[RMDB]
RNA sequence: GGGAACGACUCGAGUAGAGUCGAAAACUUUCUAGUUAUCUGUCAUUAAGCUUGCGCAUCAACUUCAGGGUGCAACAAGAUUUGUAGCGUUGCAACCAAUUCUUCAGCACGUACUUCGAUGGCUUCGUCAGCCUUACGCAACUUAACUUCAACGAUAGGAUGAAUAACGGUUCGCCGUUAUUCAUCCAAAAGAAACAACAACAACAAC
Reactivity to 2A3 in 0.01 (KOAc 150mM, MgCl2 10mM, bicine 150mM(pH8.5), 24C), signal-to-noise 4, nucleotides 027 to 156: c040u100u030u020c060u070a030g040u050u090a060u060c050u080g120u040c020a050u000u060a010a000g070c120u030u080g000c020g000c030a130u070c070a170a220c040u140u090c110a060g100g000g000u000g030c010a000a030c020a010a080g130a220u140u100u180g130u110a030g090c110g080u020u080g010c010a070a080c020c000a050a110u080u010c030u080u090c050a020g000c050a010c040g080u150a100c060u100u100c020g120a090u090g000g010c000u000u020c050g100u020c050a000g020c000c000u010u030a010c040g000c030a020a000c030u000u060a040a060c030u160u200c080a090a020c070g020a020u060a060